The record gives the reactivity of an RNA of 177 nucleotides to DMS.
RNA sequence: GGGAACGACUCGAGUAGAGUCGAAAAUGGUCAAUCGAUUUCGUGAUGGAUGCGCUUUCCAACGGCCGGCGCGUGAAGUGCCUGACCGUCGUCGACGAUUUCACGAAAGAGGCUGUCGACAUCGUCACACUCGAGCAGGAUUCGUCCUGCUCGAGUGAAAAGAAACAACAACAACAAC
Reactivity to DMS in 0.01 (KOAc 150mM, MgCl2 10mM, bicine 150mM(pH8.5), 24C), signal-to-noise 2, nucleotides 027 to 126: u000g020g010u010c010a060a020u000c080g000a200u000u000u000c020g030u000g010a020u000g000g010a090u020g010c020g000c220u000u020u010c060c060a140a050c040g010g000c010c080g010g010c010g030c020g000u010g020a090a230g050u010g000c010c000u020g000a040c040c010g000u000c100g060u020c040g010a060c020g000a170u000u000u000c000a040c030g010a000a030a060g000a110g010g020c070u010g020u000c020g000a130c040a040u000c100g020u010c100a200
Source information
For DMS the reverse transcriptase was MarathonRT. Source: RMDB library OK2TRN, as collected in RNAgym.